Description: Chemical mapping of a 177-nucleotide RNA with DMS and 2A3. The data come from the RNA Mapping Database (RMDB), library OK2TST.
RNA sequence: GGGAACGACUCGAGUAGAGUCGAAAAGCUGUUCGUGAAGUUCUGCGCAUCCUUCAGGUCGAUGUCGGUGGCCGUAAUCAGCGGACCGUUGAUAUUCUGCUGAUUGGCCUUCGCGAGAUACACGACACCUGCAUGGAUUAUUCGUAAUCCAUGCAGGAAAAGAAACAACAACAACAAC
Reactivity to DMS in 0.01 (KOAc 150mM, MgCl2 10mM, bicine 150mM(pH8.5), 24C), signal-to-noise 4, nucleotides 027 to 126: g000c110u000g000u020u000c010g040u010g000a100a140g020u000u000c030u010g010c210g010c100a110u000c030c030u000u010c120a070g010g010u030c140g000a060u000g020u000c040g000g010u000g010g000c000c000g030u000a030a030u000c000a010g010c000g000g000a010c300c170g020u010u000g010a190u010a110u010u000c010u000g040c000u000g000a000u000u010g010g020c030c030u000u010c060g010c050g010a070g000a040u000a140c060a150c030g020a070c100a160
Reactivity to 2A3 in 0.01 (KOAc 150mM, MgCl2 10mM, bicine 150mM(pH8.5), 24C), signal-to-noise 3, nucleotides 027 to 126: g040c050u000g010u090u020c020g030u030g130a100a080g040u110u010c020u060g050c030g000c050a050u020c020c000u100u110c060a010g080g080u140c050g060a080u040g100u100c020g030g030u020g030g000c020c000g010u070a030a050u010c070a020g010c000g030g020a050c030c000g130u110u170g040a040u060a090u270u000c010u010g020c000u000g000a020u010u060g000g000c000c000u000u020c020g000c010g020a020g000a050u100a080c030a010c010g030a000c000a050

Annotation:
Reactivities are rounded to 0.1 and cut off at 0 and 3.